[RMDB]
RNA sequence: GGGAACGACUCGAGUAGAGUCGAAAAUUAAAUGAUGUAGUACGGCCGCCACUGAAGGACGGGUCCUCUCCGAAAGGAGAGUUGAGAAGAGUGUGAGCAGGACCGGGUGCUAGUCACUGGUGAAAAAACGAGGAUCAAUGUUCGCAUUGAUCCUCGUAAAAGAAACAACAACAACAAC
Reactivity to DMS in 0.01 (KOAc 150mM, MgCl2 10mM, bicine 150mM(pH8.5), 24C), signal-to-noise 1, nucleotides 027 to 126: u010u000a010a070a090u010g000a010u010g020u010a040g000u000a100c080g000g020c010c020g010c010c050a040c020u000g010a150a080g010g020a100c050g000g040g000u000c040c010u000c000u000c000c010g000a110a090a220g010g000a010g010a030g000u000u010g000a100g000a100a070g010a030g020u000g040u010g010a080g030c000a100g030g010a100c050c000g000g010g030u010g010c040u000a030g010u010c020a040c000u030g010g000u020g030a000a060a050a050a090